The record gives the reactivity of an RNA of 207 nucleotides to DMS and 2A3. The reactions ran in a buffer of 150 mM KOAc, 10 mM MgCl2 and 150 mM bicine (pH 8.5), at 24 C. Source: RMDB library OK3TST, as collected in RNAgym.
[RMDB]
RNA sequence: GGGAACGACUCGAGUAGAGUCGAAAACUGGAGUCCCACCUGGCGGAGAAGGGGAGAGGCAUGGAGCUAUCCGACCUGAUUGUUUUCAAUGGGAAACUCUACUCCGUGGAUGACCGGACGGGGGUCGUCUACCAGAUCGAAGGCAGCAAAGCCGUGAUCGAGCUAGUAAUUUCGAUUACUAGCUCGAAAAAGAAACAACAACAACAAC
Reactivity to DMS in 0.01 (KOAc 150mM, MgCl2 10mM, bicine 150mM(pH8.5), 24C), signal-to-noise 1, nucleotides 027 to 156: c030u020g040g000a120g010u010c030c010c000a150c090c030u000g050g000c060g010g010a090g030a110a180g000g000g010g010a090g030a050g030g030c060a070u050g050g000a130g010c050u020a090u000c000c020g000a100c100c030u030g010a100u000u000g000u010u000u000u000c030a060a130u000g000g040g000a230a020a040c030u000c030u000a090c010u000c020c050g000u000g000g010a060u000g010a090c010c010g010g060a150c080g000g020g010g010g000u010c040g000u000c030u000a080c000c010a100g000a110u010c060g000a090a090g000g020c010a140g030c020a070a110a120g020c000c000g000u000g000a230
Reactivity to 2A3 in 0.01 (KOAc 150mM, MgCl2 10mM, bicine 150mM(pH8.5), 24C), signal-to-noise 3, nucleotides 027 to 156: c050u060g040g020a020g100u050c030c000c000a030c030c010u030g060g000c040g020g050a060g020a140a060g050g010g010g020a070g010a020g010g020c050a090u110g040g010a070g030c030u090a090u030c010c040g080a100c030c010u080g050a110u070u080g090u080u090u030u090c080a120a080u120g050g000g070a070a070a020c010u010c000u020a090c010u010c030c020g000u010g000g020a090u050g010a010c020c010g050g010a030c050g060g000g000g000g010u000c010g030u010c000u040a100c010c010a030g010a080u100c030g060a120a040g030g000c010a020g020c030a110a080a010g010c020c000g000u000g010a010